[RMDB]
RNA sequence: GGGAACGACUCGAGUAGAGUCGAAAACACGGCGCAAGUAGCCCUUGCGUUCAAGGGUGCGCAGCUGGUGAGCCACCGAGGAUGUCGACGUCAGACCGACAGCAUCGGCGAUUUCCCGGAUGCUGGACACGGAUACCAUAUUCGUAUGGUAUCCGUGAAAAGAAACAACAACAACAAC
Reactivity to DMS in 0.01 (KOAc 150mM, MgCl2 10mM, bicine 150mM(pH8.5), 24C), signal-to-noise 6, nucleotides 027 to 126: c050a070c110g010g010c010g010c020a100a140g000u010a240g010c070c060c010u000u000g010c300g010u000u010c060a040a040g000g000g020u000g000c100g010c030a060g040c020u010g000g010u000g010a160g000c090c040a060c030c000g020a040g010g000a070u000g010u010c000g010a070c050g000u020c200a130g000a130c100c010g010a030c000a010g000c020a070u000c010g010g010c060g010a130u000u010u000c030c010c000g020g010a070u000g010c020u000g000g020a300
Reactivity to 2A3 in 0.01 (KOAc 150mM, MgCl2 10mM, bicine 150mM(pH8.5), 24C), signal-to-noise 4, nucleotides 027 to 126: c040a000c020g000g000c010g000c050a120a110g060u060a100g100c010c010c010u000u020g010c080g300u240u270c020a020a020g050g000g000u080g000c070g000c030a060g030c020u090g110g030u050g030a020g030c020c020a020c020c020g020a030g090g010a050u040g000u030c020g030a050c050g060u110c050a030g070a170c040c010g000a020c020a000g020c030a050u030c010g030g000c030g060a090u020u010u050c030c000c000g040g020a090u130g000c010u000g000g010a010